RNA sequence: GGGAACGACUCGAGUAGAGUCGAAAAAUUAGGAAAAUACAACACUGCCCGUGCAGAGUUUUCUGAGCGGAAUGAAAAAAUUAAAUUAAUGUCCAAGUUAUGAGUAAUUACUUCGUUGUAGGGAGGGUCAAUUAGCACUGUUCGCAGUGCUAAUUGAAAAAGAAACAACAACAACAAC
Reactivity to DMS in 0.01 (KOAc 150mM, MgCl2 10mM, bicine 150mM(pH8.5), 24C), signal-to-noise 4, nucleotides 027 to 126: a070u020u020a090g000g000a100a070a070a080u010a050c110a080a090c110a140c050u000g000c300c050c020g010u020g000c000a020g000a110g010u020u030u080u010c010u010g000a170g020c010g000g020a050a100u010g000a000a020a040a090a080a040u010u010a010a050a120u020u020a050a030u010g000u010c070c040a050a070g020u020u020a020u020g010a140g000u020a070a040u010u010a050c080u000u010c100g010u000u000g000u000a030g000g000g000a030g000g000g010
Reactivity to 2A3 in 0.01 (KOAc 150mM, MgCl2 10mM, bicine 150mM(pH8.5), 24C), signal-to-noise 3, nucleotides 027 to 126: a000u160u080a010g020g030a050a050a070a010u130a030c070a120a000c010a020c070u070g020c000c000c000g020u040g060c010a000g020a070g050u160u140u220u100c030u040g010a040g000c000g090g050a030a040u080g190a030a030a070a000a000a000u110u080a070a030a020u120u130a080a110u120g060u060c040c010a050a060g040u040u080a050u090g060a070g060u110a070a130u030u090a030c040u060u110c070g030u010u010g050u050a020g000g020g050a070g020g000g000
Structure probing data (DMS and 2A3) for a 177-nucleotide construct. Values cover nucleotides 27 to 126. For 2A3 the reverse transcriptase was SuperScript II with manganese. Source: RMDB libraries RFM100 and RFMREP, as collected in RNAgym.